[RMDB]
This 177-nucleotide RNA was probed chemically with DMS and 2A3. The reactions ran in a buffer of 150 mM KOAc, 10 mM MgCl2 and 150 mM bicine (pH 8.5), at 24 C. The 2A3 profile rests on 3,174 reads.
RNA sequence: GGGAACGACUCGAGUAGAGUCGAAAAUCUGAGUGCCUGAACUUGCCUUUUCAUUUUACUUCAUCCUCCAAGGAGUUCAAUCACUUGGCGUGACUUCACUACUUUUAAGCAAAAGAGUAAGUUUUUAAUUGAGGAAUUCUUUCGAGAAUUCCUCAAUAAAAGAAACAACAACAACAAC
Reactivity to DMS in 0.01 (KOAc 150mM, MgCl2 10mM, bicine 150mM(pH8.5), 24C), signal-to-noise 3, nucleotides 027 to 126: u010c040u010g020a050g010u000g010c040c040u010g000a030a020c030u000u030g010c000c020u010u000u020u010c090a070u010u010u030u020a060c040u000u020c040a070u020c040c010u000c030c050a050a090g000g000a080g000u010u020c110a020a160u010c030a020c060u000u010g000g020c210g000u010g000a060c040u010u000c100a050c030u000a070c010u020u000u000u000a060a180g010c140a050a020a010a000g000a050g010u000a020a070g000u000u000u010u020u010a050
Reactivity to 2A3 in 0.01 (KOAc 150mM, MgCl2 10mM, bicine 150mM(pH8.5), 24C), signal-to-noise 6, nucleotides 027 to 126: u050c030u030g030a010g030u070g030c000c010u010g010a010a020c010u060u160g060c010c010u060u060u090u080c080a100u080u070u090u120a080c030u050u100c020a120u050c010c020u050c030c010a020a030g020g000a050g060u060u080c040a040a080u030c000a020c040u020u020g020g010c040g070u060g030a020c010u030u010c060a000c030u130a160c020u000u070u020u090a140a050g130c080a090a030a030a000g030a010g020u010a110a000g010u030u000u000u040u110a060